[RMDB]
RNA sequence: GGGAACGACUCGAGUAGAGUCGAAAAUCUACUAUGAUCUUCUCUCUUCACCCCGUCGAGUGUGACGAGGAGUGUUCUGAAGUAGAGGCUUCAGAUUUAGAAGAAGGUGAAUCAGAGUGCAUUUCUGCCUCAUUAAAUUGUUCGCAAUUUAAUGAGGAAAAGAAACAACAACAACAAC
Reactivity to DMS in 0.01 (KOAc 150mM, MgCl2 10mM, bicine 150mM(pH8.5), 24C), signal-to-noise 4, nucleotides 027 to 126: u010c030u010a040c010u000a080u000g000a020u000c020u000u000c010u000c150u000c010u000u010c020a300c000c000c000c010g020u000c000g020a200g010u020g010u010g010a020c020g000a040g010g010a130g020u000g010u000u000c000u010g000a020a010g030u000a150g020a190g020g000c000u000u000c010a010g000a040u000u000u000a080g010a030a020g000a040a030g010g010u010g000a080a040u000c010a030g010a040g010u000g010c180a130u000u000u000c030u000g010
Reactivity to 2A3 in 0.01 (KOAc 150mM, MgCl2 10mM, bicine 150mM(pH8.5), 24C), signal-to-noise 6, nucleotides 027 to 126: u010c010u020a020c010u020a050u060g010a010u010c010u090u020c010u020c000u000c010u010u030c010a020c000c010c010c000g010u020c010g020a140g280u220g050u200g080a010c010g010a150g030g010a110g010u050g050u040u000c000u000g000a010a000g010u070a080g070a120g300g000c000u000u010c010a000g000a010u050u040u130a020g010a030a010g010a010a020g010g020u050g040a020a010u020c010a010g020a010g060u040g030c050a090u020u040u030c010u030g070